[RMDB]
RNA sequence: GGGAACGACUCGAGUAGAGUCGAAAAUACGAAAUCCAUCCUUCGUUUAACUGUCCUAUCAACUUCACAAAGGAUGAUAAAUAUUUAAUGAGUGUUGGGUUUCAAGCCAAUGGUCCUGAUAUGAUACCAAGUGUUAGUUAUUCGUAACUAACACUUGAAAAGAAACAACAACAACAAC
Reactivity to DMS in 0.01 (KOAc 150mM, MgCl2 10mM, bicine 150mM(pH8.5), 24C), signal-to-noise 9, nucleotides 027 to 126: u010a080c180g010a020a030a030u000c040c010a020u000c010c020u000u010c040g020u000u000u010a040a050c120u010g010u010c160c100u000a030u000c060a040a130c040u000u000c200a110c270a090a090a030g000g010a120u000g000a020u000a030a090a060u000a040u000u000u000a040a030u000g000a050g010u000g010u000u000g010g010g000u000u000u000c020a070a140g010c080c090a050a090u000g010g010u000c030c010u000g010a100u010a070u010g000a120u000a100c220
Reactivity to 2A3 in 0.01 (KOAc 150mM, MgCl2 10mM, bicine 150mM(pH8.5), 24C), signal-to-noise 5, nucleotides 027 to 126: u160a040c060g010a000a000a020u000c010c010a010u000c000c020u060u060c020g100u050u010u040a050a040c070u070g070u090c020c020u030a040u070c020a020a090c030u130u090c110a040c080a220a140a020g040g040a120u040g010a010u060a020a070a000u140a020u090u080u070a060a030u060g020a010g020u140g010u050u010g010g010g000u010u030u050c020a000a010g030c010c010a030a100u070g020g010u030c020c010u040g030a060u060a050u260g120a080u100a130c070